[RMDB]
Record summary: This 207-nucleotide RNA was probed chemically with DMS and 2A3. Conditions: 150 mM KOAc, 10 mM MgCl2 and 150 mM bicine (pH 8.5), 24 C.
RNA sequence: GGGAACGACUCGAGUAGAGUCGAAAAUGUACUGAGUGGGGAUUAUUUGGAAGAUAAAGAGUUCAAUUUAUCUUACAGCCUUAAGGAGAAGGAGAUUAAGAGGGUAGGUAGACUCUUUGCUAAGAUGACUUACAAGAUGAGGGCAUGUCAGGUGGUAAGCAAAGUAUACGUUCGCGUAUACUUUGCUAAAAGAAACAACAACAACAAC
Reactivity to DMS in 0.01 (KOAc 150mM, MgCl2 10mM, bicine 150mM(pH8.5), 24C), signal-to-noise 2, nucleotides 027 to 156: u000g030u000a180c080u000g010a080g070u010g030g000g010g010a100u000u020a120u000u020u000g030g000a050a050g000a020u000a030a050a000g010a140g000u010u000c150a090a210u010u000u000a030u020c030u000u000a080c010a090g030c100c040u000u010a070a170g020g010a100g020a050a100g040g010a070g020a130u000u000a030a120g000a110g000g020g020u000a010g020g040u010a140g030a090c030u000c080u000u010u010g040c080u020a040a070g060a050u000g010a080c050u010u000a080c010a060a050g030a190u000g000a070g080g040g000c020a060u000g010u000c100a070g030g000u030g030g000u000a100
Reactivity to 2A3 in 0.01 (KOAc 150mM, MgCl2 10mM, bicine 150mM(pH8.5), 24C), signal-to-noise 3, nucleotides 027 to 156: u110g000u060a060c070u070g010a010g050u060g000g010g020g010a040u010u070a040u130u250u080g060g000a020a020g000a030u050a050a060a030g060a020g070u110u100c040a040a070u030u040u040a010u020c000u010u040a010c020a030g040c000c040u090u080a080a030g030g060a040g010a010a030g040g010a030g000a030u080u030a060a020g040a050g050g030g020u030a040g000g030u020a010g010a020c010u000c000u030u070u060g000c010u030a010a050g020a050u070g020a040c020u050u060a030c050a080a010g000a050u080g010a060g010g000g010c050a000u030g030u020c010a020g030g020u030g000g030u080a040